About this RNA:
Source: RMDB library 15KREP, as collected in RNAgym. Structure probing data (DMS) for a 177-nucleotide construct.
RNA sequence: GGGAACGACUCGAGUAGAGUCGAAAACAGGAAUGGCGGGACCCACUCGACUGGGGUCCGCGUUCCAUCCUUUCUUACCUUGUGGCCGGCAUGGUCCCAGCCUCCUCGCUGGCGCCGGCUGGGCAACCAGUAAACGAGUGUUCGCACUCGUUUACUGAAAAGAAACAACAACAACAAC
Reactivity to DMS in 0.01 (KOAc 150mM, MgCl2 10mM, bicine 150mM(pH8.5), 24C), signal-to-noise 1, nucleotides 027 to 126: c280a120g000g030a010a000u000g010g030c000g030g030g010a030c000c010c010a020c050u010c260g000a160c200u000g010g000g010g020u000c000c020g010c000g000u000u000c040c000a100u000c020c010u000u010u010c110u020u010a120c070c130u000u010g000u010g000g020c020c020g030g030c000a080u010g070g000u020c300c010c000a020g000c010c150u010c170c100u010c160g020c000u010g000g000c200g000c020c040g000g000c010u020g000g030g010c030a040a030c160
For DMS the reverse transcriptase was MarathonRT.